Structure probing data (2A3 and DMS) for a 177-nucleotide construct. Conditions: 150 mM KOAc, 10 mM MgCl2 and 150 mM bicine (pH 8.5), 24 C. The 2A3 profile rests on 2,205 reads. For 2A3 the reverse transcriptase was SuperScript II with manganese. It was measured as part of the RMDB library RFM100.
RNA sequence: GGGAACGACUCGAGUAGAGUCGAAAAGGACAAACGCCUUCCAUGGAUCAGCUGACAUUGCAGUGCGUGCAGGUAAACAAAUUUCGAAGACAGGUCACUGUAGUAGAAUGGCUGGCGCUGUUCUAUGUCACAAAGGCGUGUUCGCACGCCUUUGUGAAAAAGAAACAACAACAACAAC
Reactivity to 2A3 in 0.01 (KOAc 150mM, MgCl2 10mM, bicine 150mM(pH8.5), 24C), signal-to-noise 4, nucleotides 027 to 126: g020g000a010c040a020a110a010c030g030c000c000u030u010c000c020a020u020g110g000a050u070c050a040g150c090u090g020a020c010a060u050u130g010c010a000g020u010g080c050g050u030g000c080a030g010g120u230a090a080a010c120a080a130a080u100u160u090c020g040a090a060g050a050c020a050g100g020u190c020a010c050u010g000u040a020g030u030a040g030a110a030u000g010g000c000u010g040g000c030g000c030u000g000u000u000c020u020a090u130g100
Reactivity to DMS in 0.01 (KOAc 150mM, MgCl2 10mM, bicine 150mM(pH8.5), 24C), signal-to-noise 2, nucleotides 027 to 126: g000g010a070c000a050a160a170c070g000c010c000u020u000c020c030a050u020g010g000a170u000c030a120g000c170u000g000a130c100a050u010u010g000c020a020g000u000g000c030g040u040g010c030a100g020g020u050a020a140a090c190a100a010a170u020u040u060c060g010a100a150g000a140c060a040g000g000u070c060a040c020u000g000u020a000g020u000a060g000a070a000u000g020g000c080u010g000g000c080g000c090u000g010u010u000c000u000a070u000g000